[RMDB]
RNA sequence: GGGAACGACUCGAGUAGAGUCGAAAAUAUGGACGCAGGUGCAAACUCAACUCAGAUUCACGAUACUGGUUCAGCACUAGCAAAAGCUGAUUUGCUAAGUUUGUUUGAAACUAUGAGUAGUGCAAAUAUACCUGAAGAUGGUCAGAGAUAUUUAGCACAAACACACACCAUUCGUGGUGUGUGUUUGAAAAGAAACAACAACAACAAC
Reactivity to 2A3 in 0.01 (KOAc 150mM, MgCl2 10mM, bicine 150mM(pH8.5), 24C), signal-to-noise 3, nucleotides 027 to 156: u150a040u070g010g020a050c050g020c100a040g000g060u020g010c000a050a020a080c030u040c030a050a000c020u030c060a020g010a210u100u050c060a050c140g030a010u040a090c060u030g010g010u050u000c010a010g000c030a010c010u020a060g040c040a000a050a030a020g020c060u070g070a180u080u010u020g000c000u000a050a110g000u000u050u040g130u030u060u080g080a070a060a010c020u020a090u150g030a040g090u180a010g000u020g060c000a010a060a000u040a020u050a120c000c000u000g030a030a010g090a130u140g010g090u020c020a000g040a010g050a060u000a040u060u060u040a030g000c010a000
Reactivity to DMS in 0.01 (KOAc 150mM, MgCl2 10mM, bicine 150mM(pH8.5), 24C), signal-to-noise 2, nucleotides 027 to 156: u000a050u000g020g040a100c090g000c020a090g040g010u010g030c020a070a070a100c030u000c020a030a120c080u000c030a070g010a150u020u000c090a130c080g000a170u000a040c030u000g000g000u000u000c080a100g020c130a080c040u000a050g000c050a030a040a040a140g020c090u020g000a100u000u000u000g000c020u000a100a090g010u010u000u000g010u000u000u010g010a060a040a060c080u000a080u000g010a140g000u000a060g010u000g000c030a040a040a040u010a040u010a060c030c020u000g000a060a140g030a150u000g010g010u020c020a020g020a060g000a040u000a020u010u000u000a130g050c010a130